Background: Conditions: 150 mM KOAc, 10 mM MgCl2 and 150 mM bicine (pH 8.5), 24 C. This 177-nucleotide RNA was probed chemically with 2A3 and DMS. 2A3 adducts were read by reverse transcription with SuperScript II with manganese. For DMS the reverse transcriptase was MarathonRT. The DMS profile rests on 1,313 reads. It was measured as part of the RMDB library OK1LIB.

RNA sequence: GGGAACGACUCGAGUAGAGUCGAAAAGAAUAAAUCCCUCCCUCCAAAACGCGCGCAAAUAAAGGGAGGGCAACAGGGAUGAGUAGGCCUUUUGGCCAUAACCCGAAAGCGCGCGACGGCGCAAGAAGCUACUCGGAUUAUUCGUAAUCCGAGUAGCAAAAGAAACAACAACAACAAC
Reactivity to 2A3 in 0.01 (KOAc 150mM, MgCl2 10mM, bicine 150mM(pH8.5), 24C), signal-to-noise 3, nucleotides 027 to 126: g110a070a070u180a080a050a070u010c000c010c020u010c010c010c000u000c000c020a060a030a060a100c010g020c000g000c010g010c040a100a110a000u150a090a080a000g110g010g000a000g000g000g000c000a100a020c010a040g030g000g000a030u040g030a050g140u150a080g020g040c020c000u070u300u250u300g000g020c000c000a000u060a040a050c000c000c000g020a100a100a010g020c000g010c020g010c000g020a010c000g020g120c020g000c060a110a060g040a090a000
Reactivity to DMS in 0.01 (KOAc 150mM, MgCl2 10mM, bicine 150mM(pH8.5), 24C), signal-to-noise 1, nucleotides 027 to 126: g000a030a120u030a180a300a070u000c000c000c000u000c000c000c000u000c020c000a160a060a140a050c030g030c070g020c020g090c000a000a060a190u020a040a050a020g000g000g000a070g000g000g140c300a000a040c020a000g110g030g010a010u000g010a170g000u000a090g000g010c000c000u000u000u000u040g030g070c000c000a170u000a040a080c000c070c000g000a040a070a040g090c030g000c000g000c000g000a010c050g030g110c040g050c010a000a030g000a170a050